[RMDB]
RNA sequence: GGGAACGACUCGAGUAGAGUCGAAAAGCCCUACGUGUGUCUCCUAGCUAAUAAAGAGCAAGAAGCUAUUUUGAUGUCUGAAGACGUUAAGUUAAACCCUUCAGAAGAUUUUAUAAAGCACGUCCGCAUAUCUAACCGUUCGCGGUUAGAAAAAGAAACAACAACAACAAC
Reactivity to 2A3 in 0.01 (KOAc 150mM, MgCl2 10mM, bicine 150mM(pH8.5), 24C), signal-to-noise 6, nucleotides 027 to 129: g010c000c010c000u000a020c000g030u040g000u010g050u030c010u010c050c020u050a050g000c010u030a060a050u100a100a250a010g140a020g030c030a030a030g080a060a020g010c000u020a090u050u160u010u130g090a080u090g060u030c010u020g020a010a010g010a010c040g010u020u080a040a030g000u010u100a040a020a010c020c000c000u000u010c010a000g020a020a010g000a030u040u070u020u000a200u080a020a080a010g010c000a000c020g010u030c050c060g060c050a020u070a030
Reactivity to DMS in 0.01 (KOAc 150mM, MgCl2 10mM, bicine 150mM(pH8.5), 24C), signal-to-noise 4, nucleotides 027 to 129: g030c000c010c030u000a040c070g000u020g020u020g000u030c020u040c000c000u020a040g030c000u020a030a060u050a100a110a090g030a070g060c030a130a090g030a000a000g020c040u010a060u000u000u000u000g020a030u000g010u000c010u050g010a010a020g030a060c300g000u000u000a050a160g000u000u000a100a040a070c070c040c020u000u050c020a010g000a010a010g000a050u000u000u010u000a070u000a000a050a040g020c030a000c070g030u000c150c110g020c110a000u020a090
This 170-nucleotide RNA was probed chemically with 2A3 and DMS. DMS adducts were read by reverse transcription with MarathonRT. The reactions ran in a buffer of 150 mM KOAc, 10 mM MgCl2 and 150 mM bicine (pH 8.5), at 24 C. For DMS, 21,054 sequencing reads were counted. The data come from the RNA Mapping Database (RMDB), library 15KLIB.